[RMDB]
RNA sequence: GGGAACGACUCGAGUAGAGUCGAAAAGCUGAGUAUACGAGGUUAGUUCAUUCUCGUAUGCAUGAUUGGACAAAUUAAAAUCUCAAUUUGGAUCAGGGCGUCCCUCCAGCGACGGCCGAACAUACAACGCAUUUGUUAUCUUCGGAUAACAAAUGCGAAAAGAAACAACAACAACAAC
Reactivity to DMS in 0.01 (KOAc 150mM, MgCl2 10mM, bicine 150mM(pH8.5), 24C), signal-to-noise 1, nucleotides 027 to 126: g000c050u010g000a110g050u000a030u010a000c000g010a010g000g020u000u000a090g000u010u000c150a130u000u000c000u000c010g030u000a000u000g010c040a140u000g000a090u010u020g010g010a070c060a050a010a020u000u000a030a050a090a090u010c130u000c150a010a060u010u020u000g010g000a070u010c020a110g010g000g010c030g000u000c020c000c030u000c030c030a050g010c010g000a040c050g030g010c050c030g000a120a020c060a070u040a140c250a060a090
Reactivity to 2A3 in 0.01 (KOAc 150mM, MgCl2 10mM, bicine 150mM(pH8.5), 24C), signal-to-noise 1, nucleotides 027 to 126: g010c000u010g030a010g010u060a000u000a010c010g000a010g020g050u060u120a060g080u210u300c070a030u170u090c020u000c010g000u000a000u000g030c030a050u040g020a060u040u180g040g000a010c030a030a000a040u050u040a040a040a130a280u020c020u030c060a010a040u030u060u020g110g000a130u060c080a060g020g040g060c010g000u000c040c000c000u060c020c030a010g030c010g060a030c010g060g000c000c000g030a070a000c000a020u300a030c040a090a070

The record gives the reactivity of an RNA of 177 nucleotides to DMS and 2A3.
The DMS profile rests on 837 reads.
The RNA was probed in 150 mM KOAc, 10 mM MgCl2 and 150 mM bicine (pH 8.5) at 24 C.